About this RNA:
Chemical mapping of a 177-nucleotide RNA with DMS and 2A3. The reactions ran in a buffer of 150 mM KOAc, 10 mM MgCl2 and 150 mM bicine (pH 8.5), at 24 C. The 2A3 profile rests on 17,118 reads. 2A3 is a SHAPE reagent: it acylates the 2'-hydroxyl of flexible nucleotides of all four kinds.
[RMDB]
RNA sequence: GGGAACGACUCGAGUAGAGUCGAAAAGGGAGACCCGAGCAGAGGCAUAGCGAACUGCGCACGGCGAAGCCUUGAGGGAAGGCCGUAGGACCCGGGUUCGAUUCCCGGCCGCUCCACCGAAGGGCCAGAUAUUAAUGACGUUCGCGUCAUUAAUAUCAAAAGAAACAACAACAACAAC
Reactivity to DMS in 0.01 (KOAc 150mM, MgCl2 10mM, bicine 150mM(pH8.5), 24C), signal-to-noise 8, nucleotides 027 to 126: g000g000g010a120g020a150c090c020c020g010a130g010c110a090g010a080g030g010c030a100u000a130g010c030g010a110a100c070u010g020c030g000c090a100c070g010g000c020g020a120a180g000c010c010u000u010g020a220g000g000g000a110a100g010g010c020c030g020u010a110g010g010a120c120c040c000g000g000g020u010u020c130g000a300u030u010c000c000c010g000g000c060c020g010c060u000c020c030a160c100c050g000a150a090g000g000g010c020c090a090
Reactivity to 2A3 in 0.01 (KOAc 150mM, MgCl2 10mM, bicine 150mM(pH8.5), 24C), signal-to-noise 9, nucleotides 027 to 126: g060g020g010a070g030a050c000c000c010g020a040g010c040a010g020a050g080g000c040a090u140a080g050c040g060a090a050c030u040g020c030g010c040a030c050g050g000c030g040a040a010g020c000c000u040u050g040a090g020g020g040a040a060g030g000c020c030g040u070a110g020g040a060c030c020c000g000g000g000u050u070c040g020a050u050u070c000c000c000g000g000c000c000g030c030u020c010c010a060c010c020g020a040a040g020g010g000c000c000a010